[RMDB]
RNA sequence: GGGAACGACUCGAGUAGAGUCGAAAAGAUAUGGAGCUUCCUUUCCCGACCUGUGGGAGCUGGGUACUCGGAAACGAGUACUUUCAGCGACGAUCACACAUGGUCGGGAAAGGAAGCUCCUAAGUCAGAUUACGGAAUAGUUCGCUAUUCCGUAAUCAAAAGAAACAACAACAACAAC
Reactivity to DMS in 0.01 (KOAc 150mM, MgCl2 10mM, bicine 150mM(pH8.5), 24C), signal-to-noise 1, nucleotides 027 to 126: g000a080u000a300u010g000g000a000g030c020u000u000c020c000u000u000u000c010c000c020g030a000c000c000u010g030u000g040g010g000a170g020c010u000g000g010g000u000a000c000u000c000g010g020a140a130a190c000g000a020g000u000a000c000u000u000u000c020a000g060c000g010a110c250g030a300u040c130a200c020a040c080a060u000g000g000u000c000g020g000g000a010a000a020g000g000a000a030g000c000u000c000c000u000a000a050g000u000c070a130

Chemical mapping of a 177-nucleotide RNA with DMS. The reactions ran in a buffer of 150 mM KOAc, 10 mM MgCl2 and 150 mM bicine (pH 8.5), at 24 C.